[RMDB]
Overview:
Structure probing data (DMS and 2A3) for a 177-nucleotide construct. Values cover nucleotides 27 to 126.

RNA sequence: GGGAACGACUCGAGUAGAGUCGAAAACGACGCCUUCCGCACUGUGCACGACAUCCACAUCUUCAAGCAGCCCAGGGUGAACAAGCCGCCCAAGACGAUGAAGGAGACGGACAGGUGGGUCAAGGACGUCUCUCCAAAGUUUCGACUUUGGAGAGACAAAAGAAACAACAACAACAAC
Reactivity to DMS in 0.01 (KOAc 150mM, MgCl2 10mM, bicine 150mM(pH8.5), 24C), signal-to-noise 2, nucleotides 027 to 126: c130g010a110c090g010c000c020u000u010c050c050g020c060a120c050u010g040u000g030c060a080c020g010a110c070a160u000c050c020a140c050a090u000c020u000u000c050a130a150g000c050a070g000c000c050c080a100g000g000g040u000g000a090a160c140a070a130g000c070c040g000c010c020c000a100a120g010a010c090g000a100u000g000a130a070g020g010a050g020a090c100g020g010a060c070a050g010g020u000g000g010g010u010c120a030a020g010g030a090c180
Reactivity to 2A3 in 0.01 (KOAc 150mM, MgCl2 10mM, bicine 150mM(pH8.5), 24C), signal-to-noise 3, nucleotides 027 to 126: c020g050a020c090g010c020c020u030u030c060c020g070c040a210c170u030g010u110g090c070a030c170g110a020c070a080u010c000c010a010c000a080u010c000u090u060c030a080a170g020c040a030g020c080c020c000a010g060g030g010u060g020a060a040c040a110a000g040c030c010g000c000c010c000a030a020g070a020c050g020a010u050g040a130a120g050g010a030g030a030c040g020g000a000c010a030g030g000u050g000g010g040u080c070a020a010g060g020a050c030
For 2A3 the reverse transcriptase was SuperScript II with manganese.
Conditions: 150 mM KOAc, 10 mM MgCl2 and 150 mM bicine (pH 8.5), 24 C.